[RMDB]
RNA sequence: GGGAACGACUCGAGUAGAGUCGAAAACACGUUUACCGACGAACCACUAAAUUACACGACAUUCGACAUGGUGUGUAAUCAACUCACCUCUAUACCUGAUGAAGUUGUAUAUGACGUCUGUAAUAAAUAUCAUAUGCUUCUUCGGAAGCAUAUGAUAAAAAGAAACAACAACAACAAC
Reactivity to 2A3 in 0.01 (KOAc 150mM, MgCl2 10mM, bicine 150mM(pH8.5), 24C), signal-to-noise 5, nucleotides 027 to 126: c040a010c040g020u020u060u040a060c020c020g000a010c020g050a090a040c080c010a040c080u110a080a140a140u040u030a000c010a000c010g110a020c030a080u120u140c130g110a050c120a130u040g000g010u030g000u010g000u040a000a060u040c030a020a030c010u010c030a050c010c000u040c040u100a120u090a250c010c030u060g040a080u070g050a100a030g030u070u060g040u050a090u010a040u180g050a030c030g010u000c000u010g020u020a020a030u030a060a120a010
Reactivity to DMS in 0.01 (KOAc 150mM, MgCl2 10mM, bicine 150mM(pH8.5), 24C), signal-to-noise 5, nucleotides 027 to 126: c050a130c200g010u010u000u000a030c030c060g010a050c030g010a120a150c070c050a060c140u010a050a130a060u000u000a010c010a010c010g000a060c010a030u000u020c260g020a100c240a060u000g010g000u000g010u000g000u000a030a050u000c090a030a030c030u000c030a030c020c010u000c130u010a090u010a090c180c050u000g030a060u000g000a080a080g000u000u000g000u010a170u010a110u000g010a170c040g000u000c020u000g010u000a020a020u010a050a090a070

About this RNA
Source: RMDB library OK2TRN, as collected in RNAgym. The record gives the reactivity of an RNA of 177 nucleotides to 2A3 and DMS. High DMS reactivity at an A or C suggests that its Watson-Crick edge is free. For 2A3, 5,849 sequencing reads were counted. Reactivities are given for positions 27 through 126.